[RMDB]
RNA sequence: GGGAACGACUCGAGUAGAGUCGAAAAAACUCAGCUAGGGAGAGUAUAACAUUCAUGUUGACGAGACCUAGACGAAACACAGAGGAAAAUUAGUAAUCACUGGAUAGUAUUAGUAAUGACUCUGUGUAAAACUCUUCUACGUUCGCGUAGAAGAGAAGUCCUUAUGUCUCUUCGGAGACAUAAGGACAAAAGAAACAACAACAACAAC
Reactivity to 2A3 in 0.01 (KOAc 150mM, MgCl2 10mM, bicine 150mM(pH8.5), 24C), signal-to-noise 2, nucleotides 027 to 156: a000a010c020u000c000a000g030c000u000a000g000g050g010a020g010a040g080u120a130u120a260a020c030a020u120u160c100a090u280g030u030u010g080a070c050g020a030g050a010c000c000u010a020g030a030c050g010a010a020a000c000a000c000a000g020a000g000g060a030a170a060a000u030u000a010g140u010a000a000u030c040a000c030u050g080g080a090u280a300g030u010a010u000u010a000g130u010a010a010u030g050a040c000u010c000u000g000u000g000u030a000a000a000a000c000u000c000u000u000c000u000a000c020g000u010u050c160g000c000g080u000a000g000a000a000g000a000g000a010a000
An RNA of 207 nucleotides, treated with 2A3 and read out base by base. The 2A3 profile rests on 1,058 reads. It was measured as part of the RMDB library M2RFPK. Conditions: 150 mM KOAc, 10 mM MgCl2 and 150 mM bicine (pH 8.5), 24 C.